[RMDB]
RNA sequence: GGGAACGACUCGAGUAGAGUCGAAAAAUGCCGCAUUCAGGGACGGUGACUCUAGUGGGCUACUGUCAAUCUAGCGUUGACAUCUACAUACUAUAUAGUAAUACCAAUACUCAAGACUACGAAACGGCCGAUCGAUAUGCUUCGGCAUAUCGAUCGGAAAAGAAACAACAACAACAAC
Reactivity to 2A3 in 0.01 (KOAc 150mM, MgCl2 10mM, bicine 150mM(pH8.5), 24C), signal-to-noise 1, nucleotides 027 to 126: a000u010g000c030c000g110c140a030u040u120c100a070g070g130g000a010c000g000g030u090g030a000c000u020c020u030a000g000u050g080g000g000c010u050a180c130u110g000u000c000a000a070u090c090u010a000g160c050g130u000u000g000a000c000a000u060c020u000a040c000a110u090a060c010u000a040u000a000u010a170g000u050a000a000u020a100c000c010a090a110u120a190c010u000c040a060a060g000a060c030u190a130c040g070a060a300a070c000g000g000